[RMDB]
RNA sequence: GGGAACGACUCGAGUAGAGUCGAAAAGAUAUGGAGUGAGAUGAUGCAGUGGCGUUCGGAAACGAACGCGUAACAUCUGCGAAUCUCCUCCUAAGUCAAAAGCGUGAAGAGUUCGCUCUUCACGCAACUGACGUAAGGGGUUCGCCCCUUACGUCAGAAAAGAAACAACAACAACAAC
Reactivity to DMS in 0.01 (KOAc 150mM, MgCl2 10mM, bicine 150mM(pH8.5), 24C), signal-to-noise 2, nucleotides 027 to 126: g010a030u010a300u000g000g010a030g030u000g000a010g000a000u020g000a300u010g000c000a030g010u000g000g020c000g020u000u010c000g000g000a030a090a160c000g000a000a000c000g000c000g000u000a010a070c120a010u010c000u000g010c020g010a220a000u000c000u000c000c000u020c000c000u000a030a070g010u000c060a090a040a100a140g010c000g000u000g000a010a010g010a000g000u000u010c250g000c020u000c000u010u000c000a040c000g010c000a000a010
Reactivity to 2A3 in 0.01 (KOAc 150mM, MgCl2 10mM, bicine 150mM(pH8.5), 24C), signal-to-noise 2, nucleotides 027 to 126: g050a040u080a050u170g000g020a020g040u300g030a020g010a000u110g030a100u300g030c000a010g000u000g030g010c000g010u000u010c010g000g050a060a070a050c010g000a000a010c040g000c010g000u030a060a010c020a170u120c000u020g010c000g010a030a020u000c000u000c010c000u000c000c000u000a050a020g000u000c060a090a000a100a090g000c000g000u020g000a000a000g020a000g060u070u150c220g070c110u030c000u000u000c000a010c010g000c000a000a000
Source: RMDB library TTRDEL, as collected in RNAgym. This 177-nucleotide RNA was probed chemically with DMS and 2A3. For 2A3, 3,446 sequencing reads were counted. The RNA was probed in 150 mM KOAc, 10 mM MgCl2 and 150 mM bicine (pH 8.5) at 24 C.